Chemical mapping of a 207-nucleotide RNA with 2A3 and DMS.
For DMS, 1,956 sequencing reads were counted.
The reactions ran in a buffer of 150 mM KOAc, 10 mM MgCl2 and 150 mM bicine (pH 8.5), at 24 C.
High DMS reactivity at an A or C suggests that its Watson-Crick edge is free.
The 2A3 profile rests on 3,540 reads.
RNA sequence: GGGAACGACUCGAGUAGAGUCGAAAAUCCUAAGUCGCUGAGGUAGUGCCGUGUGUUGUCAGAGAGUCGGAAACGACUCUCUUGGAUUUACACACUGUAGCACUACUACCCACCAGCGAUAUGGAAAAAGAGUAAAUCAGUUCGCUGAUUUACUCAAGGUAUAGUCUCACUUCGGUGAGACUAUACCAAAAGAAACAACAACAACAAC
Reactivity to 2A3 in 0.01 (KOAc 150mM, MgCl2 10mM, bicine 150mM(pH8.5), 24C), signal-to-noise 3, nucleotides 027 to 156: u030c010c000u030a110a030g040u000c000g000c000u000g000a010g030g000u000a010g000u000g020c010c010g000u000g010u010g010u010u010g020u020c020a030g000a000g000a000g000u020c020g030g030a110a090a070c020g000a000c020u000c020u000c010u000u050g020g000a020u110u110u300a020c000a000c000a000c000u010g110u100a020g000c000a010c000u010a000c000u000a010c020c030c010a090c000c000a000g010c000g000a000u020a070u090g010g050a020a040a040a090a060g030a010g010u040a010a000a040u000c010a010g050u040u110c250g060c150u000g000a000u000u010u000a000c010u000c010a000a030
Reactivity to DMS in 0.01 (KOAc 150mM, MgCl2 10mM, bicine 150mM(pH8.5), 24C), signal-to-noise 1, nucleotides 027 to 156: u020c010c010u000a110a300g040u000c010g010c000u010g010a090g020g010u000a010g040u000g070c000c040g060u030g000u000g010u000u000g010u000c000a030g000a010g010a060g000u000c000g000g010a200a150a300c050g010a000c000u000c000u000c010u000u000g040g020a050u000u000u000a080c010a000c010a010c040u000g040u010a070g000c010a000c000u000a000c000u010a000c020c010c050a300c150c030a000g000c000g040a070u000a120u000g000g000a050a100a140a110a100g000a120g010u000a000a000a010u000c000a050g030u000u030c300g080c010u000g000a020u000u010u000a010c000u010c000a010a030